[RMDB]
An RNA of 207 nucleotides, treated with DMS and 2A3 and read out base by base. The data come from the RNA Mapping Database (RMDB), library OK3TST. For 2A3, 838 sequencing reads were counted. For DMS the reverse transcriptase was MarathonRT.

RNA sequence: GGGAACGACUCGAGUAGAGUCGAAAAAGCUUGGUCCAGAAAGGGGCAAUGAUGAUGACACCAGCGUUGCCUGGCUCCCUUGAGGCUUAAUGAGUCAGCCCCUACUCUGCCCUCAGUGGAGGAUCACACUAAGAGAGUGAGCAAGAGAAACAAACUAAGGCUAAAUUAUGUUCGCAUAAUUUAGCCUAAAAGAAACAACAACAACAAC
Reactivity to DMS in 0.01 (KOAc 150mM, MgCl2 10mM, bicine 150mM(pH8.5), 24C), signal-to-noise 1, nucleotides 027 to 156: a110g020c010u000u000g040g010u010c030c030a190g000a100a100a050g000g030g070g000c020a100a150u000g010a110u000g030a080u000g010a170c060a170c000c000a080g010c070g040u000u000g010c040c010u010g070g000c040u000c030c020c000u000u020g010a040g030g040c060u020u010a070a110u040g020a070g000u000c010a090g000c030c030c010c000u000a070c000u000c000u000g000c090c020c000u000c040a050g030u000g010g000a050g010g000a080u010c020a070c010a080c070u000a010a140g000a110g000a120g030u010g000a100g010c040a040a180g000a150g000a150a020a130c010a040a080a030c000u020a090
Reactivity to 2A3 in 0.01 (KOAc 150mM, MgCl2 10mM, bicine 150mM(pH8.5), 24C), signal-to-noise 2, nucleotides 027 to 156: a010g020c030u060u040g060g020u040c000c000a060g130a050a070a020g050g000g000g020c060a090a160u080g080a040u070g000a040u070g070a070c000a020c070c000a000g000c090g170u160u110g000c000c020u030g020g000c000u000c000c020c000u030u090g020a030g040g040c050u130u170a080a040u200g010a010g020u000c010a060g050c000c000c000c000u000a010c000u010c020u090g020c000c020c000u020c000a020g000u100g060g020a030g030g030a010u040c000a030c000a000c020u020a090a040g070a020g020a010g150u080g020a010g020c040a070a000g000a050g010a070a040a030c120a070a080a000c100u150a110